This 207-nucleotide RNA was probed chemically with 2A3 and DMS. For 2A3, 1,787 sequencing reads were counted.
RNA sequence: GGGAACGACUCGAGUAGAGUCGAAAAUGCACAUGCAAGGGAUCUAGGUUGUGUGCUCCUUAUGAGAAUCCAAUUCCUUAUGAUAAUUUAACUGAUGAUCUAAGGUGGAACCAUUUCAUCCCAAAACCAUCCACCCUGCUACUCCCAGACCGUGGAAAGUAUCCACCUGAUUCGUCAGGUGGAUACUAAAAGAAACAACAACAACAAC
Reactivity to 2A3 in 0.01 (KOAc 150mM, MgCl2 10mM, bicine 150mM(pH8.5), 24C), signal-to-noise 4, nucleotides 027 to 156: u080g020c000a010c000a030u080g080c080a110a100g060g030g010a080u040c070u170a050g090g000u100u050g040u010g000u010g040c010u040c010c000u060u060a070u120g140a100g070a180a040u030c010c010a020a130u120u070c010c020u050u050a060u270g040a010u020a100a060u110u110u150a130a180c110u150g050a030u070g010a010u060c020u030a020a010g030g000u000g030g010a020a030c020c000a040u010u100u130c050a100u040c030c010c000a040a100a060a070c040c010a060u000c020c010a020c020c020c000u020g050c010u030a100c050u040c050c030c020a030g030a060c020c070g010u070g040g000a110a070
Reactivity to DMS in 0.01 (KOAc 150mM, MgCl2 10mM, bicine 150mM(pH8.5), 24C), signal-to-noise 1, nucleotides 027 to 156: u000g050c090a050c120a050u000g030c090a070a140g030g010g020a030u000c060u000a050g000g030u010u050g000u000g010u000g060c050u010c030c040u010u000a070u010g000a190g000a080a070u020c030c030a040a230u000u000c020c010u010u000a060u010g010a120u000a060a090u000u000u040a020a130c220u020g000a070u000g010a060u000c020u000a000a010g010g000u000g020g000a060a050c050c000a200u000u000u040c020a110u000c020c020c010a010a070a070a050c010c010a060u000c010c010a050c010c010c060u010g040c030u000a020c050u010c020c000c030a160g000a080c040c030g000u000g010g070a110a130